[RMDB]
RNA sequence: GGGAACGACUCGAGUAGAGUCGAAAAGAGUCUCGGCUUCCAACAUAAGAUGAAAUGGUCUUUGUUUCAUGUGCCCGGGACAUAGGCCUCAGCACACAGUCCCGUGGAGUGGAUGGCAAGAUUCCAGGCAGCUUCCUGGACACGGCUGUGCAGGCUACACUAUGCCAUACUUCGGUAUGGCAUAGUGAAAAGAAACAACAACAACAAC
Reactivity to 2A3 in 0.01 (KOAc 150mM, MgCl2 10mM, bicine 150mM(pH8.5), 24C), signal-to-noise 4, nucleotides 027 to 156: g070a020g000u000c000u010c000g010g000c040u150u080c050c040a040a050c030a090u210a080a070g030a050u080g130a070a140a210u270g100g020u040c060u010u090u080g070u010u050u110c120a120u140g050u080g090c030c030c000g000g010g000a000c000a010u130a020g050g000c000c010u060c130a020g020c010a000c000a000c000a020g030u040c000c020c010g040u140g010g030a050g020u100g090g090a120u080g040g030c080a110a070g060a150u210u050c020c020a040g080g010c020a020g100c020u050u050c010c000u000g000g010a020c050a020c030g120g000c060u010g000u010g020c020a020g030g000c000u010a010
Reactivity to DMS in 0.01 (KOAc 150mM, MgCl2 10mM, bicine 150mM(pH8.5), 24C), signal-to-noise 2, nucleotides 027 to 156: g000a160g000u000c000u010c020g010g030c060u000u010c040c030a110a050c040a060u000a040a090g010a070u010g000a070a040a150u000g020g000u050c080u000u000u000g000u010u000u000c040a070u010g000u000g020c080c000c000g010g010g010a030c000a140u000a020g020g010c010c000u000c050a230g020c090a080c020a000c030a130g000u000c020c040c030g020u000g010g010a100g040u000g010g010a140u010g030g010c100a120a160g010a180u000u000c030c000a090g040g060c060a190g000c090u000u000c000c010u030g010g000a060c020a060c070g000g030c050u010g000u010g020c050a100g000g000c010u010a100
This 207-nucleotide RNA was probed chemically with 2A3 and DMS. For DMS, 4,611 sequencing reads were counted. For 2A3 the reverse transcriptase was SuperScript II with manganese. It was measured as part of the RMDB library OK3TST.